[RMDB]
RNA sequence: GGGAACGACUCGAGUAGAGUCGAAAAGAAGUCCACACGUUUGGUUCGGGGAAAGAGCGUGUCGACGUAGCCAUCCUUGACCGCCAGGCCCAUGGGUAUCUCACCGACAAACUCACCCGUGUUGCCGCCCACAAUUCAGAUUCGUCUGAAUUGUGGGAAAAGAAACAACAACAACAAC
Reactivity to 2A3 in 0.01 (KOAc 150mM, MgCl2 10mM, bicine 150mM(pH8.5), 24C), signal-to-noise 2, nucleotides 027 to 126: g080a110a000g060u020c010c000a000c020a010c050g040u050u100u130g070g010u120u050c040g060g000g040g000a100a100a100g010a040g020c000g000u050g050u030c010g010a040c030g000u010a030g070c020c020a030u050c020c000u050u070g060a060c050c030g100c120c030a030g030g030c010c000c000a010u030g000g080g000u030a120u000c050u030c020a060c030c000g050a070c080a020a100a040c040u050c090a030c010c000c000g010u030g050u050u080g050c030c010g020
Reactivity to DMS in 0.01 (KOAc 150mM, MgCl2 10mM, bicine 150mM(pH8.5), 24C), signal-to-noise 2, nucleotides 027 to 126: g000a100a200g030u000c020c030a060c110a050c100g010u000u000u000g020g030u000u000c050g010g000g000g010a080a090a120g020a070g020c180g010u000g010u000c120g020a050c050g000u000a130g030c110c010a090u000c040c060u000u000g020a090c060c040g000c080c130a060g020g010c050c110c070a070u000g000g010g020u000a030u000c090u000c060a120c100c010g020a080c120a030a030a070c100u010c100a060c030c040c010g000u000g010u010u010g000c040c070g000
This 177-nucleotide RNA was probed chemically with 2A3 and DMS.
Source: RMDB library OK2TST, as collected in RNAgym.